The record gives the reactivity of an RNA of 177 nucleotides to DMS.
It was measured as part of the RMDB library OK2TST.
For DMS, 1,060 sequencing reads were counted.
The RNA was probed in 150 mM KOAc, 10 mM MgCl2 and 150 mM bicine (pH 8.5) at 24 C.
RNA sequence: GGGAACGACUCGAGUAGAGUCGAAAACGAUGGUUGUGUCCCGAACGAGGGCAGAUUGCCUAGAGCUCGUCAGACAGGGACCCAAGGGCGAGUCUGGCAGGGCGUGGUAGCUCCGCGCCGCUCAGCAGCGCCUUAACCCAUUCGUGGGUUAAGGCGCAAAAGAAACAACAACAACAAC
Reactivity to DMS in 0.01 (KOAc 150mM, MgCl2 10mM, bicine 150mM(pH8.5), 24C), signal-to-noise 1, nucleotides 027 to 126: c050g000a130u000g000g000u010u020g000u000g020u000c020c040c010g000a050a150c170g010a130g000g000g020c040a110g010a170u000u000g040c040c060u000a110g010a190g010c000u000c020g000u000c080a060g020a080c060a100g040g010g000a190c000c000c060a100a070g020g010g000c040g040a150g000u000c020u000g010g020c030a090g010g000g000c000g020u000g000g010u000a230g020c230u000c020c000g040c010g040c010c000g010c020u020c020a070g000c060a130